[RMDB]
RNA sequence: GGGAACGACUCGAGUAGAGUCGAAAACGAGAUGGCGGGCUCGAAGAGUGUUUCGAAUGGUAGCCUGCCGAACCUGGCGUGCAGUUCCACCCAGGCCGACACCGCACCGGGCACCGUCACGGAGUUCGGAACUGGGAUUGUUCGCAAUCCCAGUUCCAAAAGAAACAACAACAACAAC
Reactivity to 2A3 in 0.01 (KOAc 150mM, MgCl2 10mM, bicine 150mM(pH8.5), 24C), signal-to-noise 1, nucleotides 027 to 126: c000g040a000g030a100u080g030g000c020g010g000g000c020u040c030g010a110a010g100a020g070u120g020u120u190u160c080g050a080a100u200g090g020u060a030g130c000c040u000g050c060c000g000a020a000c010c000u020g050g050c110g050u000g030c110a170g030u230u090c030c000a020c020c000c010a000g010g070c010c010g000a020c020a020c020c000g020c010a080c060c000g020g010g000c120a170c130c060g000u010c010a000c040g030g050a120g050u050u140c080
Reactivity to DMS in 0.01 (KOAc 150mM, MgCl2 10mM, bicine 150mM(pH8.5), 24C), signal-to-noise 2, nucleotides 027 to 126: c050g000a150g000a140u010g000g000c000g020g000g030c000u000c000g000a060a080g000a170g020u000g000u010u000u010c030g030a160a140u000g020g030u000a070g020c180c020u000g030c010c000g030a080a060c050c020u000g000g050c190g000u010g020c140a140g000u030u000c070c030a080c050c000c000a030g020g000c100c040g010a010c060a030c060c100g020c090a100c080c010g010g000g010c000a130c040c010g020u000c050a070c060g000g000a190g000u000u000c150